[RMDB]
RNA sequence: GGGAACGACUCGAGUAGAGUCGAAAACUCUGUUUCGACAGAGCGUGAAUCCUAAGUCGAGUCGGGAUCAUGCAAGCCGACCAUCGGAAACGAUGGCGGUGAUGACCAUGAUUCUCUAGCGUGCUCGAUAUGGAAAUGAUGAGACUUCGGUCUCAAAAUUGACUGUUUCGUUCGCGAAACAGUCAAUAAAAGAAACAACAACAACAAC
Reactivity to 2A3 in 0.01 (KOAc 150mM, MgCl2 10mM, bicine 150mM(pH8.5), 24C), signal-to-noise 2, nucleotides 027 to 156: c020u000c000u000g060u020u200u100c160g160a040c000a000g020a000g000c060g000u100g140a050a100u040c000c000u050a180a000g050u000c000g010a000g000u000c010g000g000g000a000u000c020a000u000g070c000a000a190g000c000c040g260a300c050c000a010u000c010g010g010a030a030a080c010g000a000u000g000g000c010g020g000u000g000a060u130g020a010c060c040a000u000g000a000u110u010c020u000c040u100a040g120c080g230u170g020c010u000c010g000a010u000a020u060g010g020a080a060a110u160g070a050u120g000a020g030a000c020u070u070c280g060g000u000c000u000c000a030a080a010
Reactivity to DMS in 0.01 (KOAc 150mM, MgCl2 10mM, bicine 150mM(pH8.5), 24C), signal-to-noise 1, nucleotides 027 to 156: c000u030c000u000g030u000u010u000c200g020a160c000a040g000a000g030c030g020u000g060a110a180u000c010c000u000a070a260g030u000c080g000a040g110u000c080g030g000g010a040u000c000a050u000g000c020a070a290g030c020c030g010a240c000c000a050u000c000g030g010a290a250a160c000g000a020u000g000g010c010g000g020u000g010a060u000g000a240c300c000a010u000g030a000u000u000c000u000c070u030a230g080c110g010u000g050c000u010c030g000a090u000a180u010g000g000a060a110a070u000g000a280u000g000a000g010a060c000u030u000c290g020g020u000c000u000c000a020a000a160